[RMDB]
RNA sequence: GGGAACGACUCGAGUAGAGUCGAAAAAAAUUGAAUUCCUGUUGUAGAAUCGUUGAGCGCAACGUCGUACGUGCUGCUCUUCUUGCCGGUUCAUUUGACAAAGUCUAUGAUAUUGGCAAUCCUAAAGCCCCGAAGCAGUUCGCUGCUUCGAAAAGAAACAACAACAACAAC
Reactivity to DMS in 0.01 (KOAc 150mM, MgCl2 10mM, bicine 150mM(pH8.5), 24C), signal-to-noise 5, nucleotides 027 to 129: a020a010a080u100u050g010a150a170u000u000c030c000u000g000u030u030g000u050a010g010a070a080u040c110g010u010u000g010a070g020c090g000c060a080a070c030g000u040c300g070u030a260c080g040u000g030c060u040g060c040u000c040u020u010c040u000u000g020c000c050g040g020u000u020c000a080u010u050u000g020a000c060a030a110a160g040u020c000u010a000u000g010a040u020a010u000u000g030g050c020a020a060u060c090c050u050a010a080a000g010c020c020c030
Reactivity to 2A3 in 0.01 (KOAc 150mM, MgCl2 10mM, bicine 150mM(pH8.5), 24C), signal-to-noise 6, nucleotides 027 to 129: a000a010a030u150u110g040a030a040u040u000c000c000u020g030u010u080g040u040a040g040a120a050u090c070g000u010u030g000a000g000c010g010c060a110a130c060g020u050c170g110u190a060c010g020u000g000c020u090g000c000u000c000u000u000c030u010u050g020c000c000g020g000u010u000c030a020u160u110u150g020a040c060a150a230a030g000u000c010u010a010u030g030a040u000a040u280u010g000g020c000a010a010u060c010c000u100a060a050a050g020c000c000c000